[RMDB]
RNA sequence: GGGAACGACUCGAGUAGAGUCGAAAACGAGCUUAUCACCAGUUGUUUGCUGGUUUUAAUCAAGAUAAGGGUAAUUUUAUUUCUAGAGAAGAAUUCUCAAAAGGGUACACUCUUUUCACUUUUGAUCGGUAAGCGUGCAAUUCGUUGCACGCUUACCAAAAGAAACAACAACAACAAC
Reactivity to 2A3 in 0.01 (KOAc 150mM, MgCl2 10mM, bicine 150mM(pH8.5), 24C), signal-to-noise 1, nucleotides 027 to 126: c100g000a080g060c000u050u040a020u050c060a010c000c000a000g020u010u030g260u300u300u300g050c000u000g000g110u150u030u030u070a070a090u060c040a020a000g050a040u040a020a000g000g000g010u020a000a090u000u120u120u190a070u000u190u090c090u180a020g030a000g000a140a000g080a090a200u080u000c020u000c000a020a020a020a020g030g000g020u070a000c040a060c040u020c000u000u040u000u120c120a200c000u050u100u140u160g130a090u240c030